[RMDB]
Chemical mapping of a 177-nucleotide RNA with DMS and 2A3.
For 2A3 the reverse transcriptase was SuperScript II with manganese.
RNA sequence: GGGAACGACUCGAGUAGAGUCGAAAAAGCUACCCCAUGGUGACAAUCCAAGAGGCAGCGCUGACCAUUGCCGGGGGAACGUACAACCCGGGCAAGCCGGCCGCGUUCAUCCUGCCGACAGCGUUUACUAAACAGACUAGUUCGCUAGUCUGUUUAGAAAAGAAACAACAACAACAAC
Reactivity to DMS in 0.01 (KOAc 150mM, MgCl2 10mM, bicine 150mM(pH8.5), 24C), signal-to-noise 8, nucleotides 027 to 126: a100g010c060u010a090c060c010c020c070a110u010g000g010u000g010a100c170a110a110u010c030c030a080a080g020a150g010g010c070a030g010c060g020c040u000g010a090c030c030a150u000u000g000c020c000g000g010g000g000g010a060a050c200g000u000a100c180a110a130c070c010c000g010g010g010c050a030a050g020c120c060g020g000c060c090g020c040g000u000u000c110a070u000c070c020u000g010c030c030g010a120c110a060g010c080g000u000u000u000a160
Reactivity to 2A3 in 0.01 (KOAc 150mM, MgCl2 10mM, bicine 150mM(pH8.5), 24C), signal-to-noise 4, nucleotides 027 to 126: a000g050c030u040a040c010c010c000c010a030u080g020g000u040g030a070c070a050a090u020c020c010a070a040g050a060g120g000c020a010g020c010g000c050u050g060a200c020c020a060u030u060g010c000c000g000g000g000g000g020a120a040c060g060u080a060c030a090a050c040c010c000g030g000g000c030a020a010g130c040c080g000g000c010c020g020c020g020u060u040c020a080u050c000c020u020g010c000c010g020a020c010a010g030c020g020u040u040u050a070

Reactivities are given for positions 27 through 126. For 2A3, 7,896 sequencing reads were counted.